RNA sequence: GGGAACGACUCGAGUAGAGUCGAAAACAGUACCUACAUGUGAAAUGGUAGGGCAGCACUUUUUAAUCCUUGGCAAUCUCUUUUUACCCAUGGAUUUUUCAUAAAAAUUGGCCAAAGAGUCAAGCUGGUGCUGACCAAUUCAUUUCUUCAGAGUGUAGAUAAUCGUAGCGUUCGCGCUACGAUUAUCAAAAGAAACAACAACAACAAC
Reactivity to 2A3 in 0.01 (KOAc 150mM, MgCl2 10mM, bicine 150mM(pH8.5), 24C), signal-to-noise 2, nucleotides 027 to 156: c040a020g100u100a050c000c000u050a020c000a040u100g090u030g000a000a020a000u010g000g050u050a080g020g010g010c000a000g010c010a000c020u050u230u100u100u280a060a000u020c000c000u010u030g020g000c050a180a160u040c070u060c080u200u160u080u200u100a040c000c000c000a000u000g030g000a010u040u010u010u160u090c050a050u260a140a070a060a080a050u010u010g000g000c050c040a020a300a220g040a030g000u000c010a010a010g010c130u120g050g010u010g000c030u000g020a160c000c000a020a020u000u050c000a000u000u040u000c000u040u070c040a010g150a030g190u070g000u100a040
Conditions: 150 mM KOAc, 10 mM MgCl2 and 150 mM bicine (pH 8.5), 24 C. The record gives the reactivity of an RNA of 207 nucleotides to 2A3. Reactivities are given for positions 27 through 156.